[RMDB]
RNA sequence: GGGAACGACUCGAGUAGAGUCGAAAAACAUGGGGUUCCCCUGGAGGGAAAUGUGGAGCAGAGCCAUUCCCUGGAGAGGAGGUUCAAGUAUAGAGAGGAUCAGCCUCAAAACACUGGUGCUGCCAGGUGCGGGGGCUCAUGGCUGGAAUCCUAGCAACCAUUAGUGAGUCUUCGGACUCACUAAUGGAAAAGAAACAACAACAACAAC
Reactivity to DMS in 0.01 (KOAc 150mM, MgCl2 10mM, bicine 150mM(pH8.5), 24C), signal-to-noise 1, nucleotides 027 to 156: a110c080a120u000g040g020g000g020u020u000c000c000c010c070u020g000g100a120g000g000g000a070a040a050u000g020u020g020g030a130g050c050a120g000a110g020c010c010a120u000u000c000c010c020u000g020g000a220g000a200g050g020a160g030g000u000u000c040a040a200g050u010a090u020a200g010a300g010a200g020g000a040u000c100a090g030c030c040u000c000a040a150a120a050c140a050c040u000g010g000u000g000c040u000g000c010c020a030g000g020u000g010c050g000g020g010g040g000c050u000c040a040u000g020g000c020u000g000g020a150a190u010c020c000u020a050g000c040a060a290
Reactivity to 2A3 in 0.01 (KOAc 150mM, MgCl2 10mM, bicine 150mM(pH8.5), 24C), signal-to-noise 2, nucleotides 027 to 156: a000c040a090u100g000g000g010g010u030u020c020c000c000c000u010g050g000a120g060g030g010a020a070a050u180g030u120g040g020a040g010c100a050g030a010g070c000c010a050u060u060c030c010c020u010g010g050a080g000a030g050g000a000g000g020u020u040c030a060a010g070u020a090u120a190g160a010g020a060g070g000a020u010c050a030g040c000c010u060c020a080a100a020a000c120a010c040u030g020g010u120g090c100u160g000c020c000a030g020g030u030g010c050g000g000g000g000g000c040u070c050a020u010g010g000c030u030g010g110a080a010u030c000c030u040a010g020c010a050a000